Structure probing data (DMS and 2A3) for a 177-nucleotide construct. It was measured as part of the RMDB libraries RFM100 and RFMREP. Reactivities are given for positions 27 through 126. The reactions ran in a buffer of 150 mM KOAc, 10 mM MgCl2 and 150 mM bicine (pH 8.5), at 24 C. 2A3 adducts were read by reverse transcription with SuperScript II with manganese.
RNA sequence: GGGAACGACUCGAGUAGAGUCGAAAAUAAUAACGGGUUCGUCACGUGUGUUAUCCGGACGGUAAUGAUAAACCGUUCUGCUCAGGUUCAGGCUCCGGCAGGCCUGACGGAUACUGAGUCCGAAUGCAAUGGUAACACAAUUCGUUGUGUUACCAUUAAAAGAAACAACAACAACAAC
Reactivity to DMS in 0.01 (KOAc 150mM, MgCl2 10mM, bicine 150mM(pH8.5), 24C), signal-to-noise 9, nucleotides 027 to 126: u010a070a050u020a080a060c060g000g000g010u000u010c110g010u010c040a050c050g010u010g010u010g000u010u010a030u010c050c070g010g000a020c010g000g000u000a060a090u020g010a150u030a110a090a040c020c000g000u000u000c020u010g010c030u000c020a060g010g000u020u010c020a030g000g010c020u010c070c050g010g010c100a080g000g000c020c020u000g000a020c100g000g010a150u020a160c030u000g000a040g000u000c050c030g000a080a060u010g020c170
Reactivity to 2A3 in 0.01 (KOAc 150mM, MgCl2 10mM, bicine 150mM(pH8.5), 24C), signal-to-noise 7, nucleotides 027 to 126: u140a010a040u080a070a030c030g020g010g020u070u070c030g040u050c080a040c160g070u130g010u010g020u090u080a060u060c010c000g000g000a000c010g000g030u040a110a080u160g200a080u140a080a130a020c000c000g010u030u000c020u040g020c020u000c010a020g020g010u100u060c020a020g010g030c020u050c060c060g140g000c050a040g020g000c000c000u000g000a010c010g020g010a050u080a150c010u030g010a010g020u020c020c030g060a060a040u090g020c070